[RMDB]
RNA sequence: GGGAACGACUCGAGUAGAGUCGAAAAGCACAUGCUCCUAUCAAAUGGUGUGGGCAAUGGUCAACGGGUUGCCUUGUUUACAGAACGUAGUUUUGAAAUGAUUGCGGCGAUGUUGGCGACAGUUAAACAGUCCACGGAUUUUCGAAUCCGUGGACUGAAAAGAAACAACAACAACAAC
Reactivity to DMS in 0.01 (KOAc 150mM, MgCl2 10mM, bicine 150mM(pH8.5), 24C), signal-to-noise 1, nucleotides 027 to 126: g040c080a100c080a010u000g000c000u000c030c020u030a130u070c120a200a110a060u030g000g000u040g000u000g030g040g000c080a030a090u000g000g030u010c000a040a080c010g000g000g000u000u010g000c000c080u030u000g010u000u000u000a210c090a010g040a030a030c000g030u000a120g010u000u000u020u010g040a060a000a040u110g000a080u070u030g030c010g030g090c090g000a100u050g000u000u000g000g020c040g000a040c110a050g000u000u010a050a020a210
Reactivity to 2A3 in 0.01 (KOAc 150mM, MgCl2 10mM, bicine 150mM(pH8.5), 24C), signal-to-noise 2, nucleotides 027 to 126: g030c000a030c000a020u120g000c000u020c000c000u120a120u180c020a080a150a010u160g010g000u120g000u000g080g090g000c000a000a070u180g110g000u000c020a000a000c050g040g150g050u030u020g000c020c000u020u150g020u030u070u150a110c120a020g070a080a000c170g060u170a070g010u090u020u120u040g110a070a020a000u070g030a050u000u120g000c000g000g000c000g040a070u050g050u040u000g000g050c000g060a040c020a070g000u030u160a060a090a000
An RNA of 177 nucleotides, treated with DMS and 2A3 and read out base by base. High DMS reactivity at an A or C suggests that its Watson-Crick edge is free. It was measured as part of the RMDB library OK1LIB.